[RMDB]
RNA sequence: GGGAACGACUCGAGUAGAGUCGAAAAUGGGGCUGCUGUAGCAAAAGUGUCACAGACCGGGAGGCUUAAACAACAGAAAUUUAUUCUCUACCAUUUCUGGGCACCAGAAAUCUGAAAUCAAGGUGUCGUAAAUUUACGACUUCGGUCGUAAAUUUACAAAAGAAACAACAACAACAAC
Reactivity to DMS in 0.01 (KOAc 150mM, MgCl2 10mM, bicine 150mM(pH8.5), 24C), signal-to-noise 2, nucleotides 027 to 126: u010g020g030g000g000c030u000g020c020u030g000u020a080g040c070a030a080a070a080g000u010g000u050c000a100c060a040g020a050c110c070g010g010g000a090g010g000c060u010u010a130a090a050c140a070a120c080a030g010a030a020a030u000u010u010a060u000u000c060u040c040u000a070c090c100a070u000u000u000c000u010g010g010g000c030a030c010c000a110g000a040a050a000u010c120u010g010a050a070a050u030c090a070a100g000g030u000g030u000c030
Reactivity to 2A3 in 0.01 (KOAc 150mM, MgCl2 10mM, bicine 150mM(pH8.5), 24C), signal-to-noise 4, nucleotides 027 to 126: u100g000g000g010g010c010u020g000c020u020g020u070a020g030c030a070a070a040a050g140u100g060u080c020a060c010a050g030a070c040c000g040g020g020a030g020g000c030u100u150a140a110a050c040a070a000c040a060g100a050a020a010u130u180u130a120u140u020c030u000c000u040a080c010c060a020u000u050u000c010u040g020g010g000c000a010c010c000a000g060a020a050a010u130c130u190g070a080a070a060u090c050a100a100g000g000u020g000u010c010